[RMDB]
RNA sequence: GGGAACGACUCGAGUAGAGUCGAAAACGAUGUUUUCGAACAUCGGGAAGACCUUUGUGUGCAGGGAGCUCGGGCAGUCGAGGCCCAUUGGGCUCCCCACCGACGAUGCGAGCGAAGAACUGCACACUCUGGUGUUACGAGUGCCUUCGGGCACUAAACCAGUUUGUUGUUUCGACAACAAACUGGUAAAAGAAACAACAACAACAAC
Reactivity to 2A3 in 0.01 (KOAc 150mM, MgCl2 10mM, bicine 150mM(pH8.5), 24C), signal-to-noise 3, nucleotides 027 to 156: c020g010a000u010g040u010u040u060u190c300g150a020a000c000a010u000c010g030g020g040a080a050g160a020c000c000u060u010u040g000u020g000u000g020c010a010g010g000g000a020g010c000u010c000g080g110g070c130a040g030u020c010g010a010g000g040c000c030c040a190u130u240g000g000g020c000u060c040c010c000c000a000c000c000g000a000c020g050a080u170g230c010g010a000g010c020g100a300a000g020a020a040c000u000g000c000a000c000a000c000u000c010u010g000g000u020g030u050u110a080c140g080a020g000u000g020c010c010u070u120c220g060g000g000c000a000c000u020a010a060
Reactivity to DMS in 0.01 (KOAc 150mM, MgCl2 10mM, bicine 150mM(pH8.5), 24C), signal-to-noise 2, nucleotides 027 to 156: c010g000a010u010g020u000u020u020u000c300g020a080a010c010a000u000c010g000g040g030a100a100g030a090c000c020u000u010u010g000u000g030u000g060c030a060g000g000g020a300g010c000u000c020g010g030g010c100a300g100u000c050g010a300g020g010c000c010c000a180u020u030g020g040g010c000u010c070c020c000c010a030c150c010g010a030c000g050a240u020g020c050g000a050g020c030g010a160a130g020a120a210c020u000g000c000a040c000a040c030u000c050u000g040g000u000g000u000u010a080c030g000a090g020u000g000c010c010u010u010c270g000g000g010c000a030c000u000a020a100
The record gives the reactivity of an RNA of 207 nucleotides to 2A3 and DMS. For DMS the reverse transcriptase was MarathonRT. For DMS, 2,579 sequencing reads were counted. Values cover nucleotides 27 to 156. 2A3 adducts were read by reverse transcription with SuperScript II with manganese. The RNA was probed in 150 mM KOAc, 10 mM MgCl2 and 150 mM bicine (pH 8.5) at 24 C.